[RMDB]
RNA sequence: GGGAACGACUCGAGUAGAGUCGAAAAAUCAUUGAAAUCCAAGAUUAAAAACAAAGUGCGCGUCAUGACAGUAGAAAAGGCCCUGUACAGCCAUGCUACAACUGCUAGCACAUUGUACAUAGACGAAUAAUUCAAUACCCUUCGGGGUAUUGAAUUAAAAAGAAACAACAACAACAAC
Reactivity to DMS in 0.01 (KOAc 150mM, MgCl2 10mM, bicine 150mM(pH8.5), 24C), signal-to-noise 2, nucleotides 027 to 126: a060u000c020a160u010u010g010a080a160a110u020c070c020a120a100g010a060u000u000a020a070a090a120a090c010a060a070a170g030u000g050c090g020c100g000u000c040a030u000g010a080c130a060g000u010a040g020a090a050a040a090g000g040c000c060c100u000g000u010a040c080a120g000c060c070a140u000g000c020u000a040c040a060a100c180u000g000c110u020a040g000c010a000c170a060u000u000g000u010a030c080a010u000a140g030a030c120g000a140a110